[RMDB]
RNA sequence: GGGAACGACUCGAGUAGAGUCGAAAAAGGAGUCCAGUGAGUUAAGGACCCUCUACUUCGUCUAACCGGAAGACCGGAUCGCGCUCUAGCCCAAGCUCCCUGGAAUUCGCGAAUACGGAGGUAUGAACUUUCUAUGUAGAUUCGUCUACAUAGAAAGAAAAGAAACAACAACAACAAC
Reactivity to DMS in 0.01 (KOAc 150mM, MgCl2 10mM, bicine 150mM(pH8.5), 24C), signal-to-noise 8, nucleotides 027 to 126: a050g000g010a110g020u010c010c020a070g010u020g010a080g010u020u020a120a120g010g000a040c040c020c010u010c030u010a050c040u010u000c080g000u000c070u020a100a120c070c030g000g010a140a090g010a130c050c020g000g000a070u000c030g010c050g000c160u010c020u010a070g010c030c010c010a070a100g010c020u010c010c020c000u010g010g000a060a120u010u020c040g010c030g000a090a050u030a090c040g010g010a060g000g000u020a050u020g010a090a170
Reactivity to 2A3 in 0.01 (KOAc 150mM, MgCl2 10mM, bicine 150mM(pH8.5), 24C), signal-to-noise 9, nucleotides 027 to 126: a000g090g010a050g010u000c010c010a020g060u080g110a080g040u150u200a110a060g020g010a030c000c020c000u000c010u040a070c020u030u040c010g040u020c060u080a080a080c020c000g040g040a120a080g070a130c020c000g030g030a070u050c030g010c010g010c030u000c030u040a030g010c000c000c000a000a030g010c010u010c000c010c000u010g030g030a070a080u110u080c040g000c030g060a040a020u120a070c040g030g040a030g030g060u110a100u150g070a030a020